[RMDB]
This 177-nucleotide RNA was probed chemically with DMS and 2A3. Reactivities are given for positions 27 through 126. The DMS profile rests on 4,575 reads. For 2A3 the reverse transcriptase was SuperScript II with manganese.
RNA sequence: GGGAACGACUCGAGUAGAGUCGAAAAGAUAUGGAGAGCUAUGAAGUACGCAACGAAGAACACCAAUGCUUUCGUCGGAAACGACGAAAGCAUUGGUGGGAGUUGAUGUAUGGAGCUCUCCUAAGUCGUGUAUUAUCAAGUUCGCUUGAUAAUACACAAAAGAAACAACAACAACAAC
Reactivity to DMS in 0.01 (KOAc 150mM, MgCl2 10mM, bicine 150mM(pH8.5), 24C), signal-to-noise 3, nucleotides 027 to 126: g010a110u000a300u010g000g010a010g010a030g020c000u000a220u010g010a160a270g000u000a010c010g000c000a000a000c010g010a180a160g010a170a220c010a000c010c000a000a000u000g010c000u000u000u000c000g010u000c020g000g010a110a090a280c010g040a020c000g000a010a000a010g000c000a010u000u000g000g030u000g000g000g020a120g000u000u000g000a040u010g000u000a010u010g020g010a020g010c010u000c000u000c000c000u010a010a040g010u000c090
Reactivity to 2A3 in 0.01 (KOAc 150mM, MgCl2 10mM, bicine 150mM(pH8.5), 24C), signal-to-noise 4, nucleotides 027 to 126: g060a060u230a110u300g000g000a020g000a000g000c020u100a190u300g080a150a030g050u010a010c020g040c020a010a000c020g280a300a140g050a160a010c000a000c000c000a020a010u030g000c010u020u030u010c000g000u000c000g020g080a230a100a050c040g010a020c020g000a000a000a000g000c000a000u000u000g000g000u000g000g000g000a030g000u000u010g050a300u170g000u010a010u020g010g010a000g000c000u000c000u000c000c000u000a020a000g080u070c070